This 177-nucleotide RNA was probed chemically with DMS.
RNA sequence: GGGAACGACUCGAGUAGAGUCGAAAAGAUAUGGACGACGCUAAUCGUGUGGGCACCUAUGAAGUAAACACUCUUCGGAAACGAAGAGUGUUUAUGGAGGUGCCACACGACAACGUCGUCCUAAGUCCAAACAGCUUCACUUCGGUGAAGCUGUUUGAAAAGAAACAACAACAACAAC
Reactivity to DMS in 0.01 (KOAc 150mM, MgCl2 10mM, bicine 150mM(pH8.5), 24C), signal-to-noise 1, nucleotides 027 to 126: g010a100u010a300u000g010g040a000c000g000a010c000g040c010u000a220a290u000c000g010u050g030u010g010g040g020c030a010c010c000u000a300u000g000a070a300g000u000a000a000a000c000a000c000u000c000u000u000c010g010g000a090a070a170c010g000a000a010g020a000g000u000g010u010u000u000a010u000g010g040a050g020g000u000g000c010c000a000c010a000c000g010a020c180a040a090c000g040u000c010g000u000c000c000u000a010a040g000u010c060
About this RNA:
High DMS reactivity at an A or C suggests that its Watson-Crick edge is free.